[RMDB]
RNA sequence: GGGAACGACUCGAGUAGAGUCGAAAACUGCAGGUCAACGGAGGUUCUUCAGAUCAGCUAUUGCAGAAGAAAGGUCAGCCAAGCGCUCUGGGCCGUCUCGACUGUAUAUAGGAGCUUCUGAUUUCAACCAGAAGCUAACUCUCUCCGAAACAAUGAGCUCGUCGUAAUUAUUCGUAAUUACGACGAGAAAAGAAACAACAACAACAAC
Reactivity to 2A3 in 0.01 (KOAc 150mM, MgCl2 10mM, bicine 150mM(pH8.5), 24C), signal-to-noise 4, nucleotides 027 to 156: c030u050g000c030a020g010g030u060c040a070a030c050g060g010a030g000g010u060u040c020u050u060c030a010g020a110u020c030a020g040c000u040a020u080u080g000c010a010g020a050a010g030a030a050a000g010g020u040c010a010g000c020c020a190a040g080c070g030c120u080c110u110g040g000g030c020c010g050u010c020u000c050g030a040c010u020g030u040a060u010a000u020a230g090g030a030g000c010u020u000c000u010g080a130u150u180u280c050a050a030c030c000a000g000a000a000g000c000u010a030a060c010u020c000u010c010u000c040c030g060a090a080a040c070a040a150u150g020a040g030
Reactivity to DMS in 0.01 (KOAc 150mM, MgCl2 10mM, bicine 150mM(pH8.5), 24C), signal-to-noise 2, nucleotides 027 to 156: c030u000g050c050a110g010g020u000c030a090a060c080g020g000a050g010g030u010u000c020u000u000c040a130g010a070u010c050a110g010c020u000a080u010u010g000c010a060g000a020a250g000a040a110a060g040g000u000c030a090g020c030c020a090a110g040c120g030c070u030c050u020g020g020g030c020c010g000u020c070u000c010g010a290c010u010g000u000a040u010a090u000a080g050g020a100g000c010u000u010c010u000g020a040u000u010u000c160a110a070c040c010a020g020a020a010g020c000u000a020a050c030u000c050u000c010u000c020c030g000a170a080a040c050a070a110u010g020a100g000